[RMDB]
RNA sequence: GGGAACGACUCGAGUAGAGUCGAAAAGAUAUGGACUACCCACCUAUGUACGACUAUGAAGGCCUUCGGAAACGAAGGCUGGAGUCGGUAGUAGAGGUCCUAAGUCAAAGGCAACUUCGGUUGCCAAGACUUAUUUAAGCUUCGGCUUAAAUAAGUCAAAAGAAACAACAACAACAAC
Reactivity to DMS in 0.01 (KOAc 150mM, MgCl2 10mM, bicine 150mM(pH8.5), 24C), signal-to-noise 6, nucleotides 027 to 126: g000a070u010a150u010g010g000a020c010u000a150c010c010c030a300c120c000u000a010u010g000u000a290c010g010a020c010u010a150u010g010a190a110g000g000c000c000u000u000c010g000g000a120a080a120c000g000a000a000g000g000c000u000g000g020a010g000u000c000g020g010u010a300g010u000a010g010a120g000g000u000c000c010u000a100a130g000u000c070a090a090a160g000g000c000a000a010c000u010u020c160g020g000u000u010g010c010c000a030a040
Reactivity to 2A3 in 0.01 (KOAc 150mM, MgCl2 10mM, bicine 150mM(pH8.5), 24C), signal-to-noise 3, nucleotides 027 to 126: g010a010u130a080u180g000g010a000c020u170a190c030c000c030a020c030c020u040a030u240g300u300a030c000g000a010c010u180a280u300g030a020a030g030g000c010c010u030u020c000g020g000a050a060a040c010g000a000a220g060g000c000u000g000g000a000g000u010c010g010g000u010a010g000u000a020g020a030g030g000u000c000c030u010a190a020g100u060c080a150a030a040g000g000c000a000a000c000u090u210c300g170g000u010u010g000c020c000a010a010